Structure probing data (2A3 and DMS) for a 177-nucleotide construct. Source: RMDB library TTRDES, as collected in RNAgym. Reactivities are given for positions 27 through 126. For 2A3 the reverse transcriptase was SuperScript II with manganese.

RNA sequence: GGGAACGACUCGAGUAGAGUCGAAAAGAUAUGGAUGAUGUACCGAGCUCCGGAUCGGAAACGAUCCGAAGAGCCUAGACAGUACCUCAUCCUAAGUCAAAGCAAAAACGCUUCGGCGUUUUUGCAACGUAUACUUCAGCUUCGGCUGAAGUAUACGAAAAGAAACAACAACAACAAC
Reactivity to 2A3 in 0.01 (KOAc 150mM, MgCl2 10mM, bicine 150mM(pH8.5), 24C), signal-to-noise 1, nucleotides 027 to 126: g010a010u040a020u060g000g010a000u000g000a020u040g000u020a010c060c090g120a190g000c000u000c020c000g020g000a000u010c010g010g000a030a010a010c000g040a000u030c050c000g000a020a020g000a010g020c000c010u140a180g080a080c030a030g010u000a000c000c020u000c010a020u030c010c010u000a050a000g020u040c050a120a100a100g000c010a000a000a000a000a000c000g040c030u050u130c300g240g020c050g020u000u010u020u000u000g010c010a010a000
Reactivity to DMS in 0.01 (KOAc 150mM, MgCl2 10mM, bicine 150mM(pH8.5), 24C), signal-to-noise 2, nucleotides 027 to 126: g010a020u000a080u000g000g000a000u000g000a030u010g000u020a030c010c020g050a150g040c000u010c010c000g020g000a010u030c020g000g000a020a010a080c000g010a020u000c000c000g000a060a140g020a020g010c020c300u000a090g050a160c300a090g000u000a000c000c090u000c000a010u000c000c010u000a000a070g000u010c000a110a190a140g000c010a000a000a000a000a020c010g020c000u010u020c250g020g010c000g000u000u000u000u000u000g000c000a040a060